[RMDB]
RNA sequence: GGGAACGACUCGAGUAGAGUCGAAAAUGUUUUGUUCCAUCAGGAAAAUGGGAUUCAAGCUCAUUGAGUGCAACAUCAAGGAACACAUUGAGCGCGUGGGAAACACUUAUGGUACCCUCCGCGCCAACUAUAGCUUAACGUUCGCGUUAAGCUAUAGAAAAGAAACAACAACAACAAC
Reactivity to DMS in 0.01 (KOAc 150mM, MgCl2 10mM, bicine 150mM(pH8.5), 24C), signal-to-noise 9, nucleotides 027 to 126: u020g000u010u010u010u010g000u000u000c000c000a140u030c100a080g020g000a070a040a010a010u000g000g000g000a060u020u040c280a110a180g020c020u000c010a010u000u000g000a300g030u010g000c300a080a100c200a090u030c190a120a120g000g000a010a010c010a070c220a120u010u000g000a100g020c000g010c000g000u010g000g000g000a110a090a090c070a080c200u030u050a090u040g020g010u010a130c070c000c000u010c260c010g000c010g000c010c020a020a050
Reactivity to 2A3 in 0.01 (KOAc 150mM, MgCl2 10mM, bicine 150mM(pH8.5), 24C), signal-to-noise 9, nucleotides 027 to 126: u080g030u020u100u050u080g010u010u010c030c020a040u070c050a070g090g090a040a110a020a040u030g020g000g030a020u190u240c170a150a060g070c020u010c020a060u030u060g030a040g070u120g080c090a120a070c020a170u170c060a100a110g020g000a030a010c040a010c030a080u020u090g020a050g070c000g000c000g000u020g000g010g050a030a300a030c060a020c050u200u210a150u300g080g000u110a080c000c000c010u030c070c010g000c000g000c000c000a010a000

Background: Chemical mapping of a 177-nucleotide RNA with DMS and 2A3. For DMS, 33,166 sequencing reads were counted. The data come from the RNA Mapping Database (RMDB), library OK1LIB.